[RMDB]
This 177-nucleotide RNA was probed chemically with 2A3 and DMS. For DMS the reverse transcriptase was MarathonRT. The RNA was probed in 150 mM KOAc, 10 mM MgCl2 and 150 mM bicine (pH 8.5) at 24 C. The 2A3 profile rests on 1,181 reads. 2A3 adducts were read by reverse transcription with SuperScript II with manganese.
RNA sequence: GGGAACGACUCGAGUAGAGUCGAAAACUUGAGCCCAGGAUUUCGAGGUUACAGUGAGCCAUGAUCAUGCCACUGCACUUCAGCCUGGGUGACAGAGUGAGACCCUGUCUCAAAGAAAAAAAAAAACAGGUAUGAGGUAAUUCGUUACCUCAUACCUAAAAGAAACAACAACAACAAC
Reactivity to 2A3 in 0.01 (KOAc 150mM, MgCl2 10mM, bicine 150mM(pH8.5), 24C), signal-to-noise 2, nucleotides 027 to 126: c000u010u030g040a000g000c040c000c030a010g040g000a160u150u230u260c120g030a000g030g000u060u070a080c020a000g010u000g020a040g140c100c050a090u110g030a140u260c140a030u080g000c010c010a000c020u000g020c000a010c010u000u000c000a010g010c000c000u020g000g000g000u000g020a010c000a000g170a020g040u060g000a040g050a020c020c050c150u130g080u010c060u030c050a030a170a020g110a110a030a010a010a010a000a020a010a020a010a030c100
Reactivity to DMS in 0.01 (KOAc 150mM, MgCl2 10mM, bicine 150mM(pH8.5), 24C), signal-to-noise 2, nucleotides 027 to 126: c010u000u010g010a300g010c000c000c050a030g030g010a080u000u010u000c250g010a020g010g000u000u010a110c040a040g000u010g020a120g000c040c090a080u020g040a110u010c200a300u000g010c010c000a060c000u000g040c300a040c010u000u010c000a090g000c010c000u000g020g000g000u000g000a050c160a100g010a070g020u000g010a120g010a140c010c100c010u000g000u010c000u000c060a030a030a090g000a000a000a000a000a010a000a000a170a080a090a180c100